[RMDB]
RNA sequence: GGGAACGACUCGAGUAGAGUCGAAAAAGGAGACUUUACCAUUGUCGCGGUUCCAAGCGAGCACCCCAAAACCGGGAAUACGGAUAAUAUCGUCCCGCACUUUGUCCGCACAAUACGCAAAACCGAUAACCACGCGGUUAGUCUCUGAGUUAAAAAGAUAAACAGGUAAGUUCGCUUACCUGUUUAUAAAAGAAACAACAACAACAAC
Reactivity to DMS in 0.01 (KOAc 150mM, MgCl2 10mM, bicine 150mM(pH8.5), 24C), signal-to-noise 2, nucleotides 027 to 156: a170g000g010a230g000a050c010u000u000u000a060c000c020a100u000u000g010u000c030g050c030g040g020u000u000c040c040a070a170g010c010g000a140g000c060a220c040c040c020c030a080a050a150a170c040c060g050g000g000a140a140u000a080c010g000g000a120u000a020a160u000a190u000c050g030u010c010c010c000g040c050a060c080u000u000u000g000u000c010c020g010c030a050c040a040a100u000a140c040g020c040a040a070a070a080c010c030g000a240u000a080a070c090c020a030c090g000c000g000g030u000u000a020g000u000c010u000c000u000g010a120g000u020u010a040a060a070a060a150g010
Reactivity to 2A3 in 0.01 (KOAc 150mM, MgCl2 10mM, bicine 150mM(pH8.5), 24C), signal-to-noise 3, nucleotides 027 to 156: a020g040g000a000g010a000c000u110u080u110a110c060c100a010u020u020g010u030c070g000c030g000g000u160u030c010c040a000a020g060c030g130a080g070c020a090c000c050c000c000a100a090a090a090c090c080g000g010g070a050a060u170a110c060g020g010a030u070a230a080u060a210u120c050g030u020c010c000c000g050c000a050c020u010u000u050g010u010c000c010g000c010a010c010a010a020u100a080c060g000c060a050a110a020a010c000c000g010a000u040a040a060c010c010a030c170g010c010g000g010u000u020a000g000u000c000u010c000u000g020a010g020u050u110a050a140a110a020a000g170

Conditions: 150 mM KOAc, 10 mM MgCl2 and 150 mM bicine (pH 8.5), 24 C.
An RNA of 207 nucleotides, treated with DMS and 2A3 and read out base by base.
For 2A3, 1,349 sequencing reads were counted.
The data come from the RNA Mapping Database (RMDB), library OK3TST.
DMS adducts were read by reverse transcription with MarathonRT.
Reactivities are given for positions 27 through 156.
The DMS profile rests on 3,253 reads.